[RMDB]
RNA sequence: GGGAACGACUCGAGUAGAGUCGAAAAGCGUGAGCUUCGGCUCACGCAAGAAGAACGCUUCGGCGUUCUUCAGCCAUGCGUGAGCAUGGCAACAAAGAUAAAAUAAAAAAACCCGCUAUUACGUGAGUAAUAGCGAAUAAAAACAGAAAGGAAAGAACAGUAUACGUGAGUAUACUGAACAUGUGGCGUUCGCGCCACAUGAACGACACUCUAAAGUGUUCCAAGAGGAACCACCUUGAGUGUCUAGUUAUAAAUAAACUAGGUCAACAGUAUGCUUCGGCAUACUGAAAAGAAACAACAACAACAAC
Reactivity to 2A3 in 0.01 (KOAc 150mM, MgCl2 10mM, bicine 150mM(pH8.5), 24C), signal-to-noise 2, nucleotides 027 to 266: g000c000g000u000g000a010g000c000u030u160c300g140g000c000u000c000a000c000g000c000a000a010g000a010a010g000a000a010c000g000c030u000u150c280g110g010c010g000u010u000c000u000u000c000a000g000c000c010a000u010g000c020g040u210g050a070g000c000a000u010g040g000c000a010a020c000a000a070a010g100a030u300a190a060a110a030u300a070a130a070a120a000a000a020c080c090c000g000c020u010a000u000u000a000c010g030u020g160a130g020u050a010a000u010a000g020c020g010a000a000u060a030a020a010a020a000c090a040g190a170a100a030g220g080a110a160a060g080a210a020c000a000g000u000a000u000a020c050g040u040g110a050g000u020a000u000a020c020u010g010a010a030c000a000u000g010u000g000g000c010g110u110u040c240g020c000g000c060c000a000c020a000u010g010a000a020c030g000a000c000a000c000u000c010u020a020a020a010g130u160g000u150u000c060c000a200a040g110a190g170g000a000a000c000c000a010c020c000u000u000g010a000g000u000g000u000c000u000a000g000u000u170a140u120a140a230a020u170a030a100a010c110u080a040g020g000u000c000a010a010

This 307-nucleotide RNA was probed chemically with 2A3. For 2A3 the reverse transcriptase was SuperScript II with manganese. Conditions: 150 mM KOAc, 10 mM MgCl2 and 150 mM bicine (pH 8.5), 24 C.